An RNA of 177 nucleotides, treated with DMS and 2A3 and read out base by base. Source: RMDB library RFMREP, as collected in RNAgym. For 2A3, 2,632 sequencing reads were counted.
[RMDB]
RNA sequence: GGGAACGACUCGAGUAGAGUCGAAAAUGUUGCUUAAUGAGAAUGAAUCCUAAUUCGACACUAGGUGGUAACCCCUCGCUAUUAUUCGGAAUAGGACACUCUCUAUCAGAAUGAAUUCUUGCUGUAACCUUUUUACAAAGUUCGCUUUGUAAAAAGGAAAAGAAACAACAACAACAAC
Reactivity to DMS in 0.01 (KOAc 150mM, MgCl2 10mM, bicine 150mM(pH8.5), 24C), signal-to-noise 5, nucleotides 027 to 126: u010g000u010u010g010c040u000u000a100a120u020g010a050g020a020a020u010g010a120a230u000c020c010u000a030a080u010u000c010g010a050c300a140c250u000a020g000g010u000g010g010u010a160a180c240c220c010c010u000c030g000c020u000a020u010u010a130u000u000c020g010g000a020a060u010a020g010g000a050c020a010c050u000c010u000c030u000a150u000c130a020g010a070a060u010g010a090a100u000u000c020u010u000g030c110u010g000u010a110a170
Reactivity to 2A3 in 0.01 (KOAc 150mM, MgCl2 10mM, bicine 150mM(pH8.5), 24C), signal-to-noise 2, nucleotides 027 to 126: u080g010u030u080g050c060u060u110a070a020u150g010a010g010a040a030u050g010a080a100u010c000c000u010a050a010u010u010c010g010a000c000a010c050u030a020g020g000u010g020g000u050a070a060c000c010c040c020u000c020g210c030u010a030u180u020a070u120u090c000g010g010a010a000u010a020g010g000a000c000a010c030u010c000u000c020u010a040u070c040a040g070a150a050u050g020a050a120u090u020c020u030u120g070c050u050g020u120a100a070

For DMS the reverse transcriptase was MarathonRT. The RNA was probed in 150 mM KOAc, 10 mM MgCl2 and 150 mM bicine (pH 8.5) at 24 C.